[RMDB]
RNA sequence: GGGAACGACUCGAGUAGAGUCGAAAAACGCCGAGUACGCUCCGCGACAACACUUCUUUCGACCCGCUAACCGAGACCUAUGGGUCGUUAAAUUACGUCUCUAUCUUACUCACAUAACAUCGCACAAAAAACGUGGUUCGGUUCGCCGAACCACGAACUACAUCGUAGGGUUCGCCCUACGAUGUAGAAAAGAAACAACAACAACAAC
Reactivity to 2A3 in 0.01 (KOAc 150mM, MgCl2 10mM, bicine 150mM(pH8.5), 24C), signal-to-noise 2, nucleotides 027 to 156: a010c030g000c010c020g010a000g020u020a010c190g070c090u000c000c030g050c010g000a020c060a170a020c100a030c050u040u070c050u050u260u140c020g030a000c000c000c020g020c130u190a000a010c050c010g050a010g000a030c020c000u020a100u230g020g000g000u020c000g080u010u010a000a000a020u110u050a020c020g030u010c010u010c010u030a050u030c030u040u130a070c050u060c090a070c020a140u210a160a050c020a110u120c080g030c180a060c140a030a050a000a130a060a000c030g010u010g000g020u010u030c000g010g050u010u020c090g010c090c000g000a000a000c000c000a000c000g000a000a000
Structure probing data (2A3) for a 207-nucleotide construct. Source: RMDB library M2RFPK, as collected in RNAgym. The reactions ran in a buffer of 150 mM KOAc, 10 mM MgCl2 and 150 mM bicine (pH 8.5), at 24 C. For 2A3 the reverse transcriptase was SuperScript II with manganese.